[RMDB]
RNA sequence: GGGAACGACUCGAGUAGAGUCGAAAAGUAUGGAUGCCAUCGUGACGGCUCAAUCACACAAGUGCCAACGAUAACGAGGCGCUCGCUAUUGCUGCGUAACUGACGGCCUGACGGUCUGACGUUACAAAAAACGAAAAGUGGUUCGCCACUUUUCGAAGAAUCGACAAUCGUUCGCGAUUGUCGAUUCAAAAGAAACAACAACAACAAC
Reactivity to 2A3 in 0.01 (KOAc 150mM, MgCl2 10mM, bicine 150mM(pH8.5), 24C), signal-to-noise 1, nucleotides 027 to 156: g130u090a160u180g000g050a040u090g010c000c000a100u040c010g040u010g060a000c070g010g040c000u030c070a020a110u140c010a030c020a000c050a160a180g020u050g040c010c060a070a070c130g040a040u120a230a070c110g020a040g020g090c000g000c010u010c010g030c010u020a000u170u180g000c050u080g020c030g020u000a000a000c010u030g020a050c020g000g040c000c020u180g110a070c140g000g000u000c000u000g000a010c020g030u000u020a000c000a010a010a010a010a010a010c000g000a000a000a000a000g000u000g070g030u010u070c160g050c090c010a000c000u020u000u000u000c000g000a090a020

Structure probing data (2A3) for a 207-nucleotide construct. The 2A3 profile rests on 647 reads.